[RMDB]
Chemical mapping of a 177-nucleotide RNA with DMS. High DMS reactivity at an A or C suggests that its Watson-Crick edge is free. For DMS, 445 sequencing reads were counted. Conditions: 150 mM KOAc, 10 mM MgCl2 and 150 mM bicine (pH 8.5), 24 C.
RNA sequence: GGGAACGACUCGAGUAGAGUCGAAAAUGAAGUACCAGAGCAGAAGAUUGUUACCUCCAUCUGUGAUGAGGAUGCACUUCCCCUAAAACAUGAAUUCCGAGCAGCAAAAGGGAAGAUCGGAGCAAUCUGGAGACUCGUAUUUCGAUACGAGUCUCCAAAAAGAAACAACAACAACAAC
Reactivity to DMS in 0.01 (KOAc 150mM, MgCl2 10mM, bicine 150mM(pH8.5), 24C), signal-to-noise 1, nucleotides 027 to 126: u000g020a120a020g000u000a070c010c060a090g050a140g050c080a120g010a160a070g000a060u050u000g010u000u020a060c020c010u000c270c010a040u030c000u000g010u030g000a160u000g010a240g000g000a000u000g000c150a160c090u000u000c000c000c020c040u010a000a120a160a050c140a060u010g010a160a090u000u000c000c030g050a100g010c050a080g010c160a040a060a230a120g040g000g000a090a120g010a090u020c070g050g000a090g010c070a020a020u000c080

For DMS the reverse transcriptase was MarathonRT.